[RMDB]
Chemical mapping of a 207-nucleotide RNA with DMS and 2A3.
Source: RMDB library OK3TST, as collected in RNAgym.
The RNA was probed in 150 mM KOAc, 10 mM MgCl2 and 150 mM bicine (pH 8.5) at 24 C.
RNA sequence: GGGAACGACUCGAGUAGAGUCGAAAACGGUAAUAUGCAGACAAGUGUUUUACAAGGCUACAGAGUUCAAUUUCGCUGUGAUUACUGAGUGAGUAUUUAGUGACUUCCCAGCUUUGGUUACUUUUUCAGAUUUACUUUAGUAGUUAUUAAACACCUACAUUCCUACUGGAUUCGUCCAGUAGGAAUGAAAAGAAACAACAACAACAAC
Reactivity to DMS in 0.01 (KOAc 150mM, MgCl2 10mM, bicine 150mM(pH8.5), 24C), signal-to-noise 3, nucleotides 027 to 156: c040g040g000u000a060a040u020a060u000g020c050a090g010a090c100a070a100g020u000g020u000u000u000u000a080c100a070a090g000g020c010u000a060c060a080g010a080g000u000u000c070a070a120u000u010u010c040g000c060u000g010u010g000a080u010u000a060c090u010g010a080g030u000g000a070g020u000a070u010u000u000a100g020u000g000a050c040u000u010c050c020c000a250g010c070u000u000u000g030g010u000u010a050c040u010u010u000u010u000c060a080g000a130u000u000u000a030c050u000u000u010a050g010u000a070g010u000u000a120u000u000a040a050a060c030a050c050c010u000a180
Reactivity to 2A3 in 0.01 (KOAc 150mM, MgCl2 10mM, bicine 150mM(pH8.5), 24C), signal-to-noise 5, nucleotides 027 to 156: c050g020g000u070a030a020u050a090u250g030c010a020g030a040c030a130a090g040u030g040u060u070u070u030a050c050a050a050g030g000c010u030a020c030a020g070a010g030u050u110c060a060a090u050u070u110c060g010c060u060g020u030g100a030u010u100a060c050u060g020a010g040u010g030a030g020u040a090u090u110u100a040g010u030g030a040c000u040u020c010c010c010a010g000c000u090u050u020g050g000u050u040a050c000u080u070u010u030u060c010a020g020a100u040u050u120a060c020u050u050u010a030g010u020a010g010u020u060a060u060u130a070a040a000c020a020c030c000u070a040